Chemical mapping of a 177-nucleotide RNA with 2A3. Values are in units of 0.01, from 0 to 300, in steps of 10. For 2A3, 1,485 sequencing reads were counted.

[RMDB]
RNA sequence: GGGAACGACUCGAGUAGAGUCGAAAACAGUGAUGGAAACAUCACUGAAAAACGUGCGAGCGCCACACGAAAAAGUCGAUCGAAUACCGAUCGACAAGCGCUAAAGUCAUGCCGAAAGGCAUGACAAGAGUAUGGGCCAGUUCGCUGGCCCAUACUCAAAAGAAACAACAACAACAAC
Reactivity to 2A3 in 0.01 (KOAc 150mM, MgCl2 10mM, bicine 150mM(pH8.5), 24C), signal-to-noise 2, nucleotides 027 to 126: c000a000g000u000g010a020u000g000g040a100a040a000c000a000u000c000a000c000u040g000a020a000a000a020a000c000g010u000g020c020g030a000g000c000g010c000c020a020c020a020c050g230a190a030a000a030a000g000u000c010g000a000u000c000g000a050a060u110a300c150c010g000a000u000c000g000a000c000a000a000g000c010g020c000u030a000a140a000g010u000c000a010u000g000c000c000g040a070a000a000g020g000c000a010u000g010a000c000a000a060